[RMDB]
RNA sequence: GGGAACGACUCGAGUAGAGUCGAAAAGGCUCUCGGCCAUCCUGGAGGCCGUGGUGCCCUCGCGCUCCAACCCCACGCACGAGAAGGUCCUGGCCAUCGUGAACGCGCUGGUGGAGAACAAGGCCAUCCGCGGCGACGAGGCCGGCCUGGUGUACAAGGUAUCUCCUCAUUUCGAUGAGGAGAUACCAAAAGAAACAACAACAACAAC
Reactivity to 2A3 in 0.01 (KOAc 150mM, MgCl2 10mM, bicine 150mM(pH8.5), 24C), signal-to-noise 1, nucleotides 027 to 156: g040g010c000u000c000u020c100g010g000c000c000a060u180c130c020u030g060g050a080g010g000c030c000g070u040g000g130u000g000c000c000c000u030c030g060c000g000c020u060c020c040a060a060c010c060c010c010a050c010g000c000a000c000g130a090g080a160a070g040g000u170c120c120u190g080g000c000c000a280u040c000g010u020g040a170a040c060g030c020g000c050u030g000g010u000g020g040a130g020a020a020c080a040a010g130g000c000c000a000u020c030c010g070c010g130g000c000g020a050c000g000a000g000g000c000c010g030g000c000c000u000g000g000u040g000u000a080c050a100a150
Record summary
Structure probing data (2A3) for a 207-nucleotide construct. The RNA was probed in 150 mM KOAc, 10 mM MgCl2 and 150 mM bicine (pH 8.5) at 24 C. 2A3 adducts were read by reverse transcription with SuperScript II with manganese. It was measured as part of the RMDB library OK3TST.